The record gives the reactivity of an RNA of 177 nucleotides to DMS and 2A3. The reactions ran in a buffer of 150 mM KOAc, 10 mM MgCl2 and 150 mM bicine (pH 8.5), at 24 C. Values cover nucleotides 27 to 126.
[RMDB]
RNA sequence: GGGAACGACUCGAGUAGAGUCGAAAAUCUGCAAUCUUCGGAUUGCAGAAAAUACGGAUCCAUACGGAUCCAUACGGAUCCAUACGGAUCCAUACGGAACCAAAACGUACCUCUUCGGAGGUACGAACACUUAUAAGAGGUUCGCCUCUUAUAAGUGAAAAGAAACAACAACAACAAC
Reactivity to DMS in 0.01 (KOAc 150mM, MgCl2 10mM, bicine 150mM(pH8.5), 24C), signal-to-noise 6, nucleotides 027 to 126: u010c000u000g010c000a010a000u000c000u000u020c220g040g010a010u000u000g000c000a000g000a020a030a060a090u000a060c110g010g010a010u000c010c000a070u000a010c100g000g010a000u000c000c000a030u010a030c220g010g010a010u010c000c000a080u000a040c080g000g010a010u000c000c000a020u000a010c160g010g010a120a190c020c020a080a040a130a190c020g000u000a000c000c010u000c000u000u020c190g020g000a020g010g000u000a000c000g000a060a110
Reactivity to 2A3 in 0.01 (KOAc 150mM, MgCl2 10mM, bicine 150mM(pH8.5), 24C), signal-to-noise 6, nucleotides 027 to 126: u010c000u000g000c000a010a000u010c000u020u030c110g150g000a000u000u000g000c000a000g000a010a010a000a000u100a010c050g010g000a000u000c010c010a010u020a060c050g000g000a000u000c010c000a010u140a020c080g000g000a000u000c010c000a010u030a050c050g000g000a000u000c000c000a000u070a010c060g050g050a030a040c020c010a010a050a030a050c010g000u000a000c000c000u010c010u050u060c210g130g000a010g000g000u000a000c000g000a000a000